[RMDB]
An RNA of 177 nucleotides, treated with 2A3 and read out base by base.
RNA sequence: GGGAACGACUCGAGUAGAGUCGAAAAUGACGUCGCGCUGCUCAAACAGAUCGGUGGGCUGGUCGGCGGGUCGGUGGGAGCCCUGGGCAUCAUCGGGGUGGCGUCUCGCGCGGAUGAGAUCGGCGCGUCCAGCAGCCCUCUUCGGAGGGCUGCUGGAAAAAGAAACAACAACAACAAC
Reactivity to 2A3 in 0.01 (KOAc 150mM, MgCl2 10mM, bicine 150mM(pH8.5), 24C), signal-to-noise 1, nucleotides 027 to 126: u200g030a030c000g000u050c000g010c000g030c000u060g030c000u030c260a000a070a250c070a030g190a060u150c120g030g040u020g100g070g000c220u080g010g010u210c070g000g080c170g000g020g090u220c000g110g250u300g050g000g100a030g000c000c000c000u040g000g020g000c030a060u080c040a050u220c110g030g030g000g020u120g000g010c110g030u030c030u020c000g040c000g000c000g000g030a060u060g070a170g000a020u040c090g020g000c000g000c000g040
For 2A3, 367 sequencing reads were counted.